An RNA of 177 nucleotides, treated with 2A3 and DMS and read out base by base. Values are in units of 0.01, from 0 to 300, in steps of 10.

[RMDB]
RNA sequence: GGGAACGACUCGAGUAGAGUCGAAAAGAUAUGGACCUACCGUACAACAGCGUACUGAUUCGGAAACGAAUUUACGACAUGUACGAGUAGGUCCUAAGUCAAAAGUAGGAACGUUCGCGUUCCUACAUCGCAAAUACGUCUUCGGACGUAUUUGCGAAAAAGAAACAACAACAACAAC
Reactivity to 2A3 in 0.01 (KOAc 150mM, MgCl2 10mM, bicine 150mM(pH8.5), 24C), signal-to-noise 1, nucleotides 027 to 126: g000a000u050a020u050g000g010a010c000c010u000a030c000c010g000u010a020c090a300a030c110a300g040c000g000u020a060c110u070g050a040u000u010c000g000g000a050a020a000c000g020a000a020u050u030u030a040c050g040a060c210a280u300g000u020a000c000g050a040g030u020a000g000g010u000c000c000u000a000a000g010u000c010a000a000a040a110g080u000a000g040g000a020a010c030g010u090u100c300g030c030g180u000u000c000c000u060a000c000a010
Reactivity to DMS in 0.01 (KOAc 150mM, MgCl2 10mM, bicine 150mM(pH8.5), 24C), signal-to-noise 1, nucleotides 027 to 126: g010a020u000a170u030g010g010a030c000c000u000a020c000c000g030u000a000c030a140a090c300a170g000c000g080u010a030c300u010g000a030u000u000c010g020g010a050a010a080c000g030a000a010u000u030u000a010c020g000a010c070a150u030g010u000a010c000g000a180g010u010a010g000g000u000c000c000u020a010a040g020u000c020a100a130a130a150g010u010a000g000g010a000a010c000g030u020u020c250g050c020g010u010u000c000c010u000a000c000a030
For DMS, 996 sequencing reads were counted. For 2A3, 1,641 sequencing reads were counted.